Conditions: 150 mM KOAc, 10 mM MgCl2 and 150 mM bicine (pH 8.5), 24 C. An RNA of 177 nucleotides, treated with DMS and 2A3 and read out base by base. Values cover nucleotides 27 to 126.
[RMDB]
RNA sequence: GGGAACGACUCGAGUAGAGUCGAAAAGAUAUGGACUAUGAAGGACCUCCCCACCUAUACGGUCGGAAACGACCGAAUAGAGGGUCUGGAGUCCUAAGUCAAAUCUAGCACGUUCGCGUGCUAGAAACAAUUCUGUACAGUUCGCUGUACAGAAUUGAAAAGAAACAACAACAACAAC
Reactivity to DMS in 0.01 (KOAc 150mM, MgCl2 10mM, bicine 150mM(pH8.5), 24C), signal-to-noise 7, nucleotides 027 to 126: g010a050u010a270u000g000g010a020c010u000a130u010g010a200a170g000g000a020c000c020u010c060c010c000c030a300c080c000u000a010u000a050c010g010g010u000c000g010g000a080a090a130c000g010a000c000c000g010a060a000u000a010g010a110g030g000g000u000c020u000g000g000a030g000u000c000c000u010a030a070g010u000c040a080a110a150u000c000u000a000g010c000a010c000g010u010u020c200g030c010g020u000g000c000u000a000g000a020a070a150
Reactivity to 2A3 in 0.01 (KOAc 150mM, MgCl2 10mM, bicine 150mM(pH8.5), 24C), signal-to-noise 4, nucleotides 027 to 126: g060a020u110a100u200g020g000a010c020u040a230u300g130a140a070g020g000a010c010c000u070c020c020c000c000a040c000c010u020a030u020a040c000g000g010u000c010g030g020a020a060a050c020g000a000c000c000g000a000a000u010a000g040a030g040g010g000u000c020u030g010g000a010g010u000c000c000u010a180a020g080u050c060a100a030a160u000c000u010a010g010c000a000c020g020u070u070c300g020c000g120u000g000c000u000a000g000a000a000a010